[RMDB]
An RNA of 177 nucleotides, treated with DMS and read out base by base.
RNA sequence: GGGAACGACUCGAGUAGAGUCGAAAAGAUAUGGACCUCCUACCCACCAUCAAUAUCUGCAUCGAUCCACAGAGCGUCGGAAACGACGCUCUGUGGGGAGCAGAUUUGAUGAGGGAGGUCCUAAGUCCUAAAACUAGGUGUUCGCACCUAGUUUUAGAAAAGAAACAACAACAACAAC
Reactivity to DMS in 0.01 (KOAc 150mM, MgCl2 10mM, bicine 150mM(pH8.5), 24C), signal-to-noise 2, nucleotides 027 to 126: g000a140u010a160u000g000g000a000c000c000u000c000c000u020a150c060c040c030a300c210c000a000u010c000a010a020u010a000u000c000u010g000c010a300u000c210g030a060u000c000c000a000c000a010g030a000g010c020g010u000c000g000g000a120a130a280c000g010a010c000g010c000u000c000u000g020u000g020g030g000g020a010g030c000a000g020a020u000u000u000g020a010u000g000a060g010g000g010a010g030g010u000c000c010u000a030a100g030u000c070
It was measured as part of the RMDB library TTRINS.